[RMDB]
RNA sequence: GGGAACGACUCGAGUAGAGUCGAAAAUGGGUAAUGUUUUCUUCCUACUUUUAUUCAGUCUCACACAUUUUCCACUAGCCCAGCAGAGCCGAUGCACACUCACGAUUGGUAUCUCCUCCUACCACUCUCUCUGCACGAGGUUCGCCUCGUGCAGAGAAAAAGAAACAACAACAACAAC
Reactivity to 2A3 in 0.01 (KOAc 150mM, MgCl2 10mM, bicine 150mM(pH8.5), 24C), signal-to-noise 1, nucleotides 027 to 126: u000g110g030g120u100a050a060u050g090u060u010u040u030c010u090u070c000c000u020a090c000u090u010u120u080a100u020u100c010a010g090u000c010u000c000a020c000a020c000a130u000u000u000u080c000c020a030c010u070a060g000c000c000c000a030g000c010a020g000a040g000c000c000g010a020u080g000c040a090c000a000c020u080c000a010c020g170a050u000u090g060g010u000a050u060c000u010c020c000u040c040c010u020a040c000c010a010c000u050c000

An RNA of 177 nucleotides, treated with 2A3 and read out base by base. Source: RMDB library OK1LIB, as collected in RNAgym. For 2A3, 549 sequencing reads were counted. The reactions ran in a buffer of 150 mM KOAc, 10 mM MgCl2 and 150 mM bicine (pH 8.5), at 24 C.